[RMDB]
This 177-nucleotide RNA was probed chemically with 2A3 and DMS. It was measured as part of the RMDB library VIROID. The RNA was probed in 150 mM KOAc, 10 mM MgCl2 and 150 mM bicine (pH 8.5) at 24 C. 2A3 adducts were read by reverse transcription with SuperScript II with manganese. For DMS the reverse transcriptase was MarathonRT.
RNA sequence: GGGAACGACUCGAGUAGAGUCGAAAACUCUACCGCUCUAUUCCUCGACUAGUUCUUGGAAUAUCGGGGAGUUCCAUACUUCCUAGUAAAGUUUCGGUGACGGCCAGGGUAGUAGCACUUUUGUUGACAAUACUCUAUUCUUCGGAAUAGAGUAUUGAAAAGAAACAACAACAACAAC
Reactivity to 2A3 in 0.01 (KOAc 150mM, MgCl2 10mM, bicine 150mM(pH8.5), 24C), signal-to-noise 2, nucleotides 027 to 126: c010u040c020u110a300c030c020g010c020u010c000u000a000u010u000c000c010u000c000g010a010c020u110a050g130u210u000c000u000u020g000g020a030a010u090a140u300c000g010g000g010g000a000g000u040u000c020c000a030u050a090c020u030u000c010c010u040a050g060u180a070a150a060g030u040u050u140c070g040g040u080g040a060c030g030g000c020c010a040g010g030g020u030a050g030u020a010g040c040a040c060u070u110u120u120g100u040u040g020a020
Reactivity to DMS in 0.01 (KOAc 150mM, MgCl2 10mM, bicine 150mM(pH8.5), 24C), signal-to-noise 6, nucleotides 027 to 126: c000u000c000u000a160c010c040g000c060u000c030u000a020u000u000c000c000u000c050g010a010c030u010a140g010u010u000c010u010u000g000g010a030a010u000a010u000c000g000g000g000g010a050g010u000u000c070c060a110u010a090c180u010u000c010c010u000a080g020u000a070a110a130g010u000u010u010c060g010g010u000g000a090c100g000g010c040c030a050g010g010g020u000a040g010u000a050g010c080a070c100u000u000u000u000g010u000u000g000a260